[RMDB]
RNA sequence: GGGAACGACUCGAGUAGAGUCGAAAAACGGCAAUCAUUAGUUUAACGUUCGCAAUCAGCAGCUCCCAUUCAGACAGGUAAUCCUGUGGGCAUCGAAGCGGAACUAUAAUUCCUUUACCACAAGAUCCCCGCACGUGUGUUUCGACACACGUGCGGGAAAAGAAACAACAACAACAAC
Reactivity to 2A3 in 0.01 (KOAc 150mM, MgCl2 10mM, bicine 150mM(pH8.5), 24C), signal-to-noise 1, nucleotides 027 to 126: a090c070g030g070c110a120a000u010c040a050u120u270a030g190u160u090u180a010a030c070g000u070u040c010g140c290a010a010u040c050a000g000c010a000g000c030u040c000c080c000a030u190u190c010a010g070a110c000a010g000g070u300a120a050u230c000c000u050g000u050g010g000g000c000a040u030c110g020a050a010g070c020g030g030a000a000c030u000a030u150a160a140u000u170c000c000u000u010u010a230c000c010a000c000a050a000g050a080u030c000
The data come from the RNA Mapping Database (RMDB), library OK1LIB. The record gives the reactivity of an RNA of 177 nucleotides to 2A3. The RNA was probed in 150 mM KOAc, 10 mM MgCl2 and 150 mM bicine (pH 8.5) at 24 C. For 2A3 the reverse transcriptase was SuperScript II with manganese. Reactivities are given for positions 27 through 126.